The record gives the reactivity of an RNA of 207 nucleotides to DMS and 2A3. Reactivities are given for positions 27 through 156.
RNA sequence: GGGAACGACUCGAGUAGAGUCGAAAAGAAUAUGAUGGCCGUACACAAGGUCGCAUCCAUAAUAAGUCGUAUUAGAGUGAAACGGAUAAUAUUCAUGGAAAACACCGGGUCCUAUUCCUGGUUCGUAUAAGUCAAUAUGGGAGUAAGGUUCCAAGUAAUGCACUACUGUAUUCGUACAGUAGUGCAUAAAAGAAACAACAACAACAAC
Reactivity to DMS in 0.01 (KOAc 150mM, MgCl2 10mM, bicine 150mM(pH8.5), 24C), signal-to-noise 3, nucleotides 027 to 156: g010a090a080u000a030u020g000a110u010g000g020c000c020g040u000a120c150a090c070a080a080g010g010u010c040g000c060a130u010c020c020a120u000a060a140u010a080a180g000u010c110g030u000a150u000u010a080g000a080g050u000g020a060a090a120c040g020g040a080u010a080a090u000a120u000u000c050a110u000g020g010a060a040a060a120c040a070c030c000g020g020g000u000c070c100u010a180u000u000c000c000u000g030g020u000u000c070g020u000a110u000a020a120g020u020c060a000a070u010a090u000g020g020g000a070g000u000a100a100g000g010u010u000c000c010a000a100g000u000a040
Reactivity to 2A3 in 0.01 (KOAc 150mM, MgCl2 10mM, bicine 150mM(pH8.5), 24C), signal-to-noise 4, nucleotides 027 to 156: g020a030a030u140a060u200g070a060u100g090g000c000c010g050u150a060c030a020c030a100a070g040g000u000c030g000c030a030u030c020c010a030u080a130a040u120a100a040g070u050c040g020u050a050u100u100a100g040a030g050u060g030a060a020a040c020g010g020a020u020a110a020u020a070u020u080c060a060u080g020g040a020a100a020a000c030a030c010c000g030g000g040u070c060c080u070a030u030u060c000c000u010g010g020u030u000c010g000u070a090u020a200a030g030u010c020a060a050u060a090u140g050g000g000a030g030u030a080a040g090g000u060u030c020c020a020a020g060u140a060
Overview
For 2A3 the reverse transcriptase was SuperScript II with manganese.